An RNA of 177 nucleotides, treated with DMS and 2A3 and read out base by base. It was measured as part of the RMDB library OK2TRN.
RNA sequence: GGGAACGACUCGAGUAGAGUCGAAAAAAACAGAAAACACCAAACCCAAUGCAUUAAACACUUUAUUAAUCGUAUCAAAACACGGUGCGCUGGCGAUUAUCACAGCACGAUCAAGAGCAGAUCGCGACGGACAAGAAUAAUUCGUUAUUCUUGUCCGAAAAGAAACAACAACAACAAC
Reactivity to DMS in 0.01 (KOAc 150mM, MgCl2 10mM, bicine 150mM(pH8.5), 24C), signal-to-noise 4, nucleotides 027 to 126: a040a030a070c090a070g000a080a050a100a050c070a030c030c030a040a120a090c050c010c010a120a080u010g000c020a040u000u000a060a060a100c100a080c110u010u000u010a060u010u000a030a040u000c100g000u000a030u010c080a070a060a050a090c130a050c080g000g020u000g010c070g010c050u000g010g030c040g000a050u000u010a040u010c100a050c160a030g010c030a020c050g010a010u000c030a030a130g020a070g000c090a060g000a020u000c020g030c090g010a140
Reactivity to 2A3 in 0.01 (KOAc 150mM, MgCl2 10mM, bicine 150mM(pH8.5), 24C), signal-to-noise 3, nucleotides 027 to 126: a000a000a000c130a070g080a030a110a020a000c080a010c020c020a050a070a040c000c010c010a010a040u050g020c020a010u020u170a040a200a040c060a040c080u200u150u110a140u060u100a080a040u010c050g010u030a010u130c070a000a060a060a060c050a040c100g020g010u040g000c030g010c050u020g020g020c020g050a050u070u030a060u190c040a010c010a120g070c040a030c050g000a010u050c030a080a040g040a030g160c050a040g000a020u030c030g000c050g090a050

Reactivities are rounded to 0.1 and cut off at 0 and 3.